[RMDB]
RNA sequence: GGGAACGACUCGAGUAGAGUCGAAAAAUGCUGAGCCCGUAUUCUUCAACAAAUCCUCUCAGUGCGCUUGCGAGCUCUUGUUCAGUUAGUGGGUAUUCAGCACCAUUUUUACCGAGGACGGGCAAACCGGCAUUGGGCAUGACUGAAACCGGAAUGAAGCCGUAUGAGUAUUCGUACUCAUACGGCUAAAAGAAACAACAACAACAAC
Reactivity to 2A3 in 0.01 (KOAc 150mM, MgCl2 10mM, bicine 150mM(pH8.5), 24C), signal-to-noise 1, nucleotides 027 to 156: a000u100g000c020u020g000a010g000c000c020c000g020u090a160u170u020c060u070u050c000a000a040c030a050a070a170u130c000c030u070c020u070c040a070g000u060g050c030g000c130u130u270g040c050g010a020g000c030u000c030u070u180g010u070u160c050a010g050u000u060a020g020u150g000g050g010u130a220u060u000c040a000g040c000a010c000c000a030u070u100u000u040u200a130c030c010g030a030g050g080a030c030g000g000g010c040a050a030a110c060c000g020g000c100a050u040u120g000g000g040c120a080u050g020a130c020u010g000a020a020a050c030c020g120g070a040a020u280g030a130